[RMDB]
RNA sequence: GGGAACGACUCGAGUAGAGUCGAAAAGACAGUAACGACUGCGAGGAAACAGGAAACACAUAUGACAGAUCUCUUGUGGUUGAUGACGAGGAGACGUCCAUCCUUCUGUAUGACAUAUGGGAACAGGGAGAAUCCAUGGUUUCGACCAUGGAUUCUCAAAAGAAACAACAACAACAAC
Reactivity to DMS in 0.01 (KOAc 150mM, MgCl2 10mM, bicine 150mM(pH8.5), 24C), signal-to-noise 2, nucleotides 027 to 126: g010a140c080a070g030u010a110a060c040g030a070c010u000g050c000g000a010g010g000a050a010a020c230a200g000g000a110a070a030c050a080c060a010u010a040u000g060a020c070a060g000a120u000c040u050c010u000u020g000u050g000g030u000u000g010a080u000g010a030c090g000a050g010g030a150g000a070c090g000u000c010c080a040u020c040c000u030u000c080u000g000u020a010u060g040a090c040a020u030a080u000g000g010g000a090a020c200a090g070g010
Reactivity to 2A3 in 0.01 (KOAc 150mM, MgCl2 10mM, bicine 150mM(pH8.5), 24C), signal-to-noise 3, nucleotides 027 to 126: g070a000c040a050g040u130a220a070c020g040a030c000u000g000c040g000a000g000g100a010a070a000c060a050g010g160a000a160a000c110a010c030a020u080a030u140g000a000c000a020g110a080u000c000u040c000u120u070g030u010g050g050u070u030g020a130u090g010a000c000g000a000g060g050a050g010a000c010g000u000c000c010a060u070c010c000u030u030c000u000g050u020a100u150g060a010c020a030u080a020u130g060g000g020a040a120c060a100g080g000
Source: RMDB library OK1LIB, as collected in RNAgym. Structure probing data (DMS and 2A3) for a 177-nucleotide construct. DMS (dimethyl sulfate) methylates the pairing face of unpaired adenines and cytosines. For DMS the reverse transcriptase was MarathonRT. For 2A3, 1,585 sequencing reads were counted. As a SHAPE reagent, 2A3 marks flexible, mostly unpaired nucleotides at the ribose 2'-OH. The DMS profile rests on 1,817 reads.